[RMDB]
RNA sequence: GGGAACGACUCGAGUAGAGUCGAAAAAAAACAGUGCGGUGAAUACGUCCCUGCUCCUUGCACACACCGCCCGUCAAACCACCCGAGCGGGGCGUGAAUGAGGAUCCUUUUCAUUGAAGGACUCGAAACGUUACACAUUAUUCGUAAUGUGUAACGUAAAAGAAACAACAACAACAAC
Reactivity to DMS in 0.01 (KOAc 150mM, MgCl2 10mM, bicine 150mM(pH8.5), 24C), signal-to-noise 9, nucleotides 027 to 126: a040a040a050a040c090a050g000u010g010c030g010g010u000g010a200a100u030a020c020g010u020c010c000c000u000g020c010u000c010c100u020u010g010c190a100c170a100c030a020c010c010g000c000c030c040g000u020c150a060a070a110c090c080a120c050c030c030g010a020g020c010g010g010g010g010c000g000u000g010a100a070u040g000a030g000g000a080u000c000c000u000u000u000u020c290a120u020u030g000a010a000g000g000a060c010u000c000g010a070a090
Reactivity to 2A3 in 0.01 (KOAc 150mM, MgCl2 10mM, bicine 150mM(pH8.5), 24C), signal-to-noise 9, nucleotides 027 to 126: a000a000a000a000c090a010g010u040g020c010g030g000u030g030a130a060u180a110c010g140u190c020c000c000u000g010c010u020c030c050u120u220g040c130a050c000a000c000a000c120c010g000c000c020c020g130u130c060a100a100a110c050c020a050c010c020c010g000a000g000c000g010g000g000g000c000g000u020g050a050a150u200g010a010g020g030a040u040c000c000u030u020u050u150c140a220u090u240g020a010a000g000g000a010c000u000c010g010a070a110
An RNA of 177 nucleotides, treated with DMS and 2A3 and read out base by base. DMS adducts were read by reverse transcription with MarathonRT. It was measured as part of the RMDB libraries RFM100 and RFMREP. For 2A3 the reverse transcriptase was SuperScript II with manganese.